RNA sequence: GGGAACGACUCGAGUAGAGUCGAAAAGGUGUCAUGGGACUCGCGCUGAACACGACGCAACUCGACACCAAACUUCAGCAUUUUCUCCCGCUGAGCAGGUGUCAUCCGAGGUGUGAGUGACACCAGGAAAAGGAACAUGGCUAUGACCAAUGUAAAAUAAAUAGCGUAUGUUCGCAUACGCUAUUUAAAAAGAAACAACAACAACAAC
Reactivity to 2A3 in 0.01 (KOAc 150mM, MgCl2 10mM, bicine 150mM(pH8.5), 24C), signal-to-noise 6, nucleotides 027 to 156: g080g010u020g010u010c010a030u080g010g040g080a030c020u030c050g030c000g040c060u050g080a170a030c070a020c120g260a060c020g030c020a000a080c010u020c060g000a000c000a000c000c000a030a030a010c020u070u070c000a010g010c020a050u050u090u170u100c080u080c030c040c040g000c000u010g000a010g010c040a040g000g010u020g000u010c020a050u060c050c050g030a030g020g020u030g000u020g010a050g000u020g020a030c000a030c020c020a000g050g030a020a060a010a010g020g010a020a010c000a020u010g010g000c010u100a080u180g060a140c000c020a050a030u140g020u150a070a080a000a070
Reactivity to DMS in 0.01 (KOAc 150mM, MgCl2 10mM, bicine 150mM(pH8.5), 24C), signal-to-noise 5, nucleotides 027 to 156: g020g040u000g020u000c030a100u000g020g010g020a300c040u000c040g020c280g040c030u000g000a100a300c110a100c010g000a100c040g010c000a090a060c050u000c030g000a060c010a030c000c000a050a080a050c070u000u000c020a030g020c020a250u000u000u000u010c130u000c110c130c080g010c020u000g010a060g040c100a220g030g020u000g010u000c030a100u010c060c040g010a090g040g010u010g030u000g010a200g020u000g010a060c020a030c000c010a080g020g000a080a080a080a060g020g000a140a140c020a050u000g020g010c010u000a090u000g000a130c010c020a050a100u020g000u010a060a130a120a140
The data come from the RNA Mapping Database (RMDB), library OK3TST. This 207-nucleotide RNA was probed chemically with 2A3 and DMS. Conditions: 150 mM KOAc, 10 mM MgCl2 and 150 mM bicine (pH 8.5), 24 C. For DMS, 10,487 sequencing reads were counted.